The record gives the reactivity of an RNA of 177 nucleotides to 2A3 and DMS. Conditions: 150 mM KOAc, 10 mM MgCl2 and 150 mM bicine (pH 8.5), 24 C. 2A3 adducts were read by reverse transcription with SuperScript II with manganese.
RNA sequence: GGGAACGACUCGAGUAGAGUCGAAAAGAUACAAAAACAUAAAAACAUCGACUGUUUUAUAUUUUGGCUAGUCGUUCACGUAAACUUUGGUCGGUUUGGGGUGGACGACUUCUUUUUUAUUUUGCUAAGAUGCUUACUAAUUCGUUAGUAAGCAUCUAAAAGAAACAACAACAACAAC
Reactivity to 2A3 in 0.01 (KOAc 150mM, MgCl2 10mM, bicine 150mM(pH8.5), 24C), signal-to-noise 8, nucleotides 027 to 126: g020a000u200a100c050a010a030a000a080a010c050a020u110a070a090a000a010a000c010a040u150c160g150a090c110u040g030u020u010u030u010a060u000a020u010u030u030u030g060g000c060u030a010g000u010c000g010u000u010c000a010c040g110u050a010a010a010c020u090u070u150g140g020u210c060g000g020u010u020u020g050g020g010g010u000g000g010a000c000g000a000c000u000u000c000u000u010u020u020u010u000a090u050u070u070u080g050c020u020a060
Reactivity to DMS in 0.01 (KOAc 150mM, MgCl2 10mM, bicine 150mM(pH8.5), 24C), signal-to-noise 6, nucleotides 027 to 126: g000a090u020a070c040a010a020a010a030a070c090a040u010a010a020a020a030a020c010a020u010c300g010a110c270u000g000u000u000u010u000a020u000a040u010u000u000u000g000g010c150u010a030g010u000c000g010u000u000c010a010c010g000u000a010a010a010c010u000u010u010g030g010u010c250g020g000u000u000u000g020g010g030g050u000g000g000a000c010g000a010c010u000u000c000u000u000u000u010u010u010a060u020u010u010u010g010c090u010a100

Source: RMDB libraries RFM100 and RFMREP, as collected in RNAgym.